[RMDB]
RNA sequence: GGGAACGACUCGAGUAGAGUCGAAAAAAGUAUCUGCAUCUGUCUGAGUCAGCUGCUGGUAGAGCCUCUCAGAGGACAGCCAUGUUAGCCAUGUAGAGCCAUGGCGCUCUGCUUCAUUCUGUCCCUAACUCGAAAAUUAGUUCGCUAAUUUUCGAGUAAAAGAAACAACAACAACAAC
Reactivity to DMS in 0.01 (KOAc 150mM, MgCl2 10mM, bicine 150mM(pH8.5), 24C), signal-to-noise 4, nucleotides 027 to 126: a060a080g000u000a030u000c040u000g000c020a040u000c030u000g000u000c080u000g010a150g010u000c050a040g000c070u000g010c010u000g000g020u000a060g020a100g010c020c010u000c080u010c100a090g010a100g000g000a080c070a110g000c070c080a030u000g010u000u000a070g010c020c090a090u010g000u010a080g000a120g030c090c020a080u000g010g000c030g010c020u000c020u000g010c050u000u020c090a090u010u010c020u000g000u000c000c010c000u010a120
Reactivity to 2A3 in 0.01 (KOAc 150mM, MgCl2 10mM, bicine 150mM(pH8.5), 24C), signal-to-noise 3, nucleotides 027 to 126: a000a000g090u040a040u020c030u020g000c010a030u000c050u070g110u030c070u140g080a040g150u050c020a010g010c020u040g000c020u020g010g070u070a070g030a030g130c020c010u010c020u000c040a030g030a030g070g010a040c030a000g010c020c010a030u070g030u130u150a020g000c010c030a070u130g070u140a060g040a030g130c020c010a100u050g020g000c050g010c010u000c000u010g020c000u030u000c020a030u040u040c020u040g040u060c000c000c000u000a010
The record gives the reactivity of an RNA of 177 nucleotides to DMS and 2A3. For DMS the reverse transcriptase was MarathonRT. The reactions ran in a buffer of 150 mM KOAc, 10 mM MgCl2 and 150 mM bicine (pH 8.5), at 24 C. Reactivities are rounded to 0.1 and cut off at 0 and 3. For 2A3, 3,830 sequencing reads were counted.